This 177-nucleotide RNA was probed chemically with 2A3 and DMS.
Source: RMDB library OK2TRN, as collected in RNAgym.

[RMDB]
RNA sequence: GGGAACGACUCGAGUAGAGUCGAAAAACUGGGCGUUCACCUCGGCCGUGGUGGCGCUGGUGGUCGCGCUGCUGCUGCUGGCGUUCGAGUUCGCCCAGGUUCGCGGUCGCGGACUCGCGCCGCUGGCCUACCCGGUCUGAUUCGUCAGACCGGGUAGAAAAGAAACAACAACAACAAC
Reactivity to 2A3 in 0.01 (KOAc 150mM, MgCl2 10mM, bicine 150mM(pH8.5), 24C), signal-to-noise 3, nucleotides 027 to 126: a020c010u010g000g010g010c010g010u030u020c020a030c060c010u000c000g000g000c000c000g020u010g030g000u030g000g000c000g020c010u030g040g080u110g050g090u130c040g000c010g000c010u010g000c000u010g000c000u010g000c000u000g030g000c020g040u100u190c140g020a060g050u050u060c000g000c010c000c000a000g010g000u040u130c040g000c020g010g080u300c060g000c020g000g240a300c180u090c240g000c040g000c000c000g000c080u100g090g000c000
Reactivity to DMS in 0.01 (KOAc 150mM, MgCl2 10mM, bicine 150mM(pH8.5), 24C), signal-to-noise 2, nucleotides 027 to 126: a100c020u000g000g000g010c010g000u020u000c020a080c030c020u000c000g010g000c000c070g040u000g000g020u000g010g000c000g020c020u000g010g020u010g020g010u000c140g000c030g010c020u000g010c020u000g010c020u010g010c030u000g000g000c220g000u010u000c120g000a070g010u010u000c010g000c000c000c020a020g010g010u000u010c080g010c030g000g020u010c060g030c020g010g010a160c210u020c050g030c050g010c000c000g010c000u000g010g010c120
The 2A3 profile rests on 3,894 reads. The DMS profile rests on 3,119 reads.